[RMDB]
RNA sequence: GGGAACGACUCGAGUAGAGUCGAAAACUUAUCUGGAUCUGUUUUCAACUUCGCUCAUCAUAGAUGGUGAAGUAAGGAGUGGCGAUAUCGCUGUUACGACAGGAAAACUGAAUGUCAAUUAUGCCCCGCCGUUUGAGACAUUCGUGUCUCAAACGGCAAAAGAAACAACAACAACAAC
Reactivity to 2A3 in 0.01 (KOAc 150mM, MgCl2 10mM, bicine 150mM(pH8.5), 24C), signal-to-noise 1, nucleotides 027 to 126: c000u080u110a000u040c110u060g060g000a030u000c010u010g010u000u040u070u050c000a010a040c000u000u000c020g050c070u190c300a060u010c040a110u150a300g000a080u040g000g000u000g000a000a000g000u070a040a080g080g000a020g000u000g020g000c000g050a100u020a060u300c020g030c020u100g080u190u060a100c060g020a010c040a120g180g050a000a040a000a040c000u010g120a230a040u100g110u060c020a040a040u190u020a080u130g070c000c030c000c000
This 177-nucleotide RNA was probed chemically with 2A3. Source: RMDB library OK2TST, as collected in RNAgym. For 2A3, 476 sequencing reads were counted.